[RMDB]
RNA sequence: GGGAACGACUCGAGUAGAGUCGAAAAGAAGUGGCAGGGACAUGCCCCAUAAGCUCGUUCUAGCAACAUAUGUUUGGCUAGUUCGAGCGAUUAGUCUAGAGGAGCGUCCUCUCGCCUUUUUACGAGACCAUACCACGGACUUCGGUCCGUGGUAUGGAAAAGAAACAACAACAACAAC
Reactivity to 2A3 in 0.01 (KOAc 150mM, MgCl2 10mM, bicine 150mM(pH8.5), 24C), signal-to-noise 3, nucleotides 027 to 126: g170a030a020g070u040g020g000c000a000g050g000g000a010c040a060u210g060c000c000c000c000a110u040a130a010g000c010u000c000g000u010u000c000u000a000g000c040a010a060c010a190u300a110u260g140u070u110u110g190g010c000u000a010g010u000u000c000g000a000g000c000g000a000u020u060a030g070u040c140u110a060g040a160g050g030a120g010c000g010u000c000c000u070c010u030c040g000c000c000u000u010u000u020u080a050c020g000a000g010a030
Reactivity to DMS in 0.01 (KOAc 150mM, MgCl2 10mM, bicine 150mM(pH8.5), 24C), signal-to-noise 2, nucleotides 027 to 126: g030a090a050g010u050g010g080c010a090g100g000g010a000c030a130u030g120c010c000c000c000a070u000a060a200g000c000u000c000g060u030u000c000u000a000g020c030a050a000c000a160u030a090u010g010u000u010u000g020g020c000u000a000g070u000u010c010g020a010g070c010g010a030u000u010a030g000u020c140u000a160g030a190g000g000a110g000c070g000u000c050c000u000c030u040c100g020c000c020u010u000u000u020u010a180c190g010a120g000a250
Conditions: 150 mM KOAc, 10 mM MgCl2 and 150 mM bicine (pH 8.5), 24 C. The record gives the reactivity of an RNA of 177 nucleotides to 2A3 and DMS. It was measured as part of the RMDB library OK1LIB.